[RMDB]
This 177-nucleotide RNA was probed chemically with DMS and 2A3. Reactivities are given for positions 27 through 126. For 2A3 the reverse transcriptase was SuperScript II with manganese. High DMS reactivity at an A or C suggests that its Watson-Crick edge is free. The reactions ran in a buffer of 150 mM KOAc, 10 mM MgCl2 and 150 mM bicine (pH 8.5), at 24 C.

RNA sequence: GGGAACGACUCGAGUAGAGUCGAAAAAACCUCGCGACAGGGGCAAUAUAGCAGCAAGUGACGGUUAACUGAUGCGCUAUUAUUGCUAGUUGAAAACUACUUCAAUAAGUGGAAACGACGCUUGCGUUCGUGGCUGUAAAUUCGUUUACAGCCACGAAAAAGAAACAACAACAACAAC
Reactivity to DMS in 0.01 (KOAc 150mM, MgCl2 10mM, bicine 150mM(pH8.5), 24C), signal-to-noise 3, nucleotides 027 to 126: a160a090c000c000u010c010g020c010g000a060c170a160g020g000g000g020c010a000a020u000a020u000a020g000c010a080g020c000a140a160g000u000g000a300c300g040g020u010u050a140a050c050u010g000a110u020g000c000g000c010u000a000u000u040a020u010u000g010c000u000a080g000u000u000g000a030a070a110a100c050u010a030c040u000u000c300a060a070u020a020a080g000u000g000g010a090a120a170c060g000a080c040g000c060u000u000g010c010g000u050
Reactivity to 2A3 in 0.01 (KOAc 150mM, MgCl2 10mM, bicine 150mM(pH8.5), 24C), signal-to-noise 7, nucleotides 027 to 126: a000a000c000c000u010c020g030c010g010a030c030a040g090g010g030g000c000a020a000u020a000u000a020g030c180a000g000c000a040a040g060u020g160a090c100g170g070u210u190a060a030c020u050g120a300u040g070c000g000c000u010a010u160u050a010u020u020g000c000u010a010g000u000u020g060a030a060a040a010c010u020a020c010u010u070c130a100a220u190a300a040g010u030g010g010a080a100a000c020g020a010c020g000c070u020u040g010c000g040u000